This 177-nucleotide RNA was probed chemically with 2A3 and DMS.
RNA sequence: GGGAACGACUCGAGUAGAGUCGAAAAGCUUGCGAGUUCGCUCGCAAGCAAAAGUCAGAAAGAUCAAAAAGAUCAAUAAAGCGACUGAGACGCAAAAUAAUAAAACUAUUCCCUUCGGGGAAUAGAACAUUACAAUAUACUUCGGUAUAUUGUAAUGAAAAGAAACAACAACAACAAC
Reactivity to 2A3 in 0.01 (KOAc 150mM, MgCl2 10mM, bicine 150mM(pH8.5), 24C), signal-to-noise 2, nucleotides 027 to 126: g010c000u000u000g000c000g000a000g010u050u110c170g080c040u000c000g000c000a010a000g000c000a000a000a010a000g000u000c000a000g100a130a130a020g010a010u020c030a010a240a190a110a030g000a030u000c000a010a060u120a150a210a010g050c030g070a020c090u100g070a050g040a080c030g010c060a040a110a030a130u130a060a130u110a090a080a030a040c000u010a020u000u000c000c000c000u000u030c180g100g000g010g010a000a000u000a000g000a000a000
Reactivity to DMS in 0.01 (KOAc 150mM, MgCl2 10mM, bicine 150mM(pH8.5), 24C), signal-to-noise 2, nucleotides 027 to 126: g000c010u010u000g010c030g010a010g000u010u000c210g050c000u010c000g010c010a000a000g010c000a020a030a070a070g020u010c010a050g020a150a180a150g020a000u010c000a090a140a100a160a160g000a030u000c000a080a090u010a100a110a230g000c090g020a040c040u010g000a070g000a120c110g020c110a060a090a060a070u010a100a050u010a030a070a090a110c000u010a000u000u000c010c000c010u000u010c160g040g010g010g000a000a000u000a000g010a060a130
2A3 is a SHAPE reagent: it acylates the 2'-hydroxyl of flexible nucleotides of all four kinds. The 2A3 profile rests on 2,418 reads.